RNA sequence: GGGAACGACUCGAGUAGAGUCGAAAAAAUGUAAUUGCACAGAUUCAUUUGCCCCUUUAUCUUCUGCAGGUGGUUGAUGAUUAGUCUGUAAAUGUUAAAGUUCUUCGUGCGGUUAAGGAGGUAGAGGCCCAGGUAAAUGGUUCGCCAUUUACCUGGGAAAAGAAACAACAACAACAAC
Reactivity to DMS in 0.01 (KOAc 150mM, MgCl2 10mM, bicine 150mM(pH8.5), 24C), signal-to-noise 1, nucleotides 027 to 126: a100a010u030g000u080a020a050u000u020g000c180a040c110a060g000a050u000u010c000a020u000u000u010g040c000c080c010c070u010u020u010a100u040c050u000u000c030u000g000c030a020g000g000u000g010g050u000u010g020a040u000g020a100u000u000a070g020u000c020u000g010u050a070a080a060u010g000u000u000a040a130a080g010u010u030c020u000u000c050g010u000g000c060g020g000u000u040a010a110g000g000a020g010g000u010a010g000a060g000g020
Reactivity to 2A3 in 0.01 (KOAc 150mM, MgCl2 10mM, bicine 150mM(pH8.5), 24C), signal-to-noise 3, nucleotides 027 to 126: a020a000u240g030u180a070a060u040u120g040c020a070c020a040g040a040u110u070c050a030u060u000u170g030c010c020c010c000u000u100u000a180u090c070u130u000c030u090g100c030a030g040g000u100g040g030u170u100g020a030u010g020a030u040u150a060g020u030c120u100g050u030a000a180a000u130g030u150u200a080a130a000g080u050u010c030u060u050c060g130u100g020c000g000g080u120u160a120a070g030g000a030g000g120u050a030g020a010g040g000